[RMDB]
RNA sequence: GGGAACGACUCGAGUAGAGUCGAAAAGAGAAGAAAGGGAGUAGAGAAAAUCCAGCCUUGGUUGAAGUGGAGAGGGGUCAAGAUGCCACAGGUGGAGAAGAGGAUACAGCUCCCAUUAGAGGAACAUUUUAAAGUGUGUGGCUACCCAUCUUGUAAAAGCAUCAGUAGGUUUCGACCUACUGAUGCUAAAAGAAACAACAACAACAAC
Reactivity to 2A3 in 0.01 (KOAc 150mM, MgCl2 10mM, bicine 150mM(pH8.5), 24C), signal-to-noise 1, nucleotides 027 to 156: g120a030g020a100a000g010a000a200a120g010g030g000a010g020u120a000g020a050g030a160a040a010a010u010c000c000a040g000c010c010u020u050g010g020u040u050g080a120a000g030u010g070g020a020g020a000g090g010g010g000u020c000a000a020g060a040u060g010c010c000a020c010a020g000g020u020g010g020a080g010a040a010g010a010g010g010a050u090a110c050a020g070c000u020c000c000c020a020u040u140a020g050a010g010g010a060a070c070a180u130u250u130u190a110a080a050g050u040g000u010g000u000g120g000c020u000a000c000c040c020a080u040c030u080u190g080u230a060a080a130
Structure probing data (2A3) for a 207-nucleotide construct. It was measured as part of the RMDB library OK3TST. Values cover nucleotides 27 to 156. 2A3 adducts were read by reverse transcription with SuperScript II with manganese. Conditions: 150 mM KOAc, 10 mM MgCl2 and 150 mM bicine (pH 8.5), 24 C.